[RMDB]
RNA sequence: GGGAACGACUCGAGUAGAGUCGAAAACUCUGCAAACCAGCGCCCGUAACCAGUUCUUCGGUACGGUGAUAGAGCGUGACCAUCAGCAGGUUCAACAACACAUCAAUAUCUUGUUAUCAGAUGGGGAGUUGGUCCCUCUAUUCGUAGAGGGACCAACAAAAGAAACAACAACAACAAC
Reactivity to DMS in 0.01 (KOAc 150mM, MgCl2 10mM, bicine 150mM(pH8.5), 24C), signal-to-noise 1, nucleotides 027 to 126: c000u000c010u000g000c140a150a070a030c070c090a150g010c030g010c150c000c010g000u000a170a120c020c010a170g010u000u000c160u040u010c230g010g010u000a010c030g000g010u000g030a200u040a150g000a020g000c000g000u000g000a150c050c050a050u100c090a040g010c070a030g010g000u000u010c040a040a010c040a130a060c040a080c090a090u010c130a020a070u000a040u000c080u000u010g010u000u000a100u020c120a130g000a040u000g000g000g000g000a170
Reactivity to 2A3 in 0.01 (KOAc 150mM, MgCl2 10mM, bicine 150mM(pH8.5), 24C), signal-to-noise 1, nucleotides 027 to 126: c030u050c020u020g000c010a090a050a080c050c020a070g010c010g000c010c000c000g000u060a270a270c000c000a120g050u140u110c090u200u210c160g000g000u050a030c030g000g000u010g060a040u120a040g110a010g000c070g020u030g030a030c000c000a050u090c010a000g000c000a010g030g070u090u090c000a010a030c010a040a030c050a000c000a140u210c010a020a100u050a020u190c000u050u050g060u230u060a120u140c060a040g020a060u030g000g000g000g050a100